RNA sequence: GGGAACGACUCGAGUAGAGUCGAAAACAAAAAUGGCAUGAUGAGACUUCCAAGGCCGAGUCAUAAAAGGUGAUGCAGCUUUUUGCCUUUUUCACUCUAACCCUUGCUUUGGAGGUCCUGAGCCACCAAGUACAGACUCCAGCUAGUCUAAGGCUGAUAAAAUAUCCCGAUUCGUCGGGAUAUUUUAAAAAGAAACAACAACAACAAC
Reactivity to 2A3 in 0.01 (KOAc 150mM, MgCl2 10mM, bicine 150mM(pH8.5), 24C), signal-to-noise 3, nucleotides 027 to 156: c050a000a100a020a050a040u090g010g010c060a040u140g030a070u070g020a200g000a160c000u000u000c000c000a000a010g030g000c070c090g010a000g000u040c040a010u160a130a060a000a000g020g020u020g020a010u080g050c100a060g130c160u060u140u070u150u110g010c010c000u010u040u000u020u020c050a020c020u000c040u070a170a210c000c010c060u090u160g000c000u010u000u000g000g000a010g000g000u000c000c000u020g010a010g000c000c000a020c020c020a050a010g010u020a030c020a040g020a030c000u040c090c010a010g010c120u090a000g030u020c030u070a040a020g050g000c010u010g030a040
Reactivity to DMS in 0.01 (KOAc 150mM, MgCl2 10mM, bicine 150mM(pH8.5), 24C), signal-to-noise 2, nucleotides 027 to 156: c040a050a050a090a140a130u010g000g010c020a130u000g020a180u010g000a160g000a030c000u000u000c020c030a060a030g000g030c000c270g010a050g020u020c050a120u010a010a060a070a040g000g020u000g020a030u000g040c120a170g010c130u000u010u000u010u010g010c000c050u000u000u000u000u020c080a090c080u010c110u000a100a070c080c030c030u020u000g010c010u000u010u000g010g000a030g030g010u000c010c030u000g000a140g010c020c010a040c010c030a030a130g020u000a100c090a140g020a040c000u010c050c070a130g070c040u010a070g020u000c040u000a110a160g030g000c020u000g020a300
Record summary:
Structure probing data (2A3 and DMS) for a 207-nucleotide construct. For DMS, 3,978 sequencing reads were counted. DMS adducts were read by reverse transcription with MarathonRT. For 2A3, 2,210 sequencing reads were counted.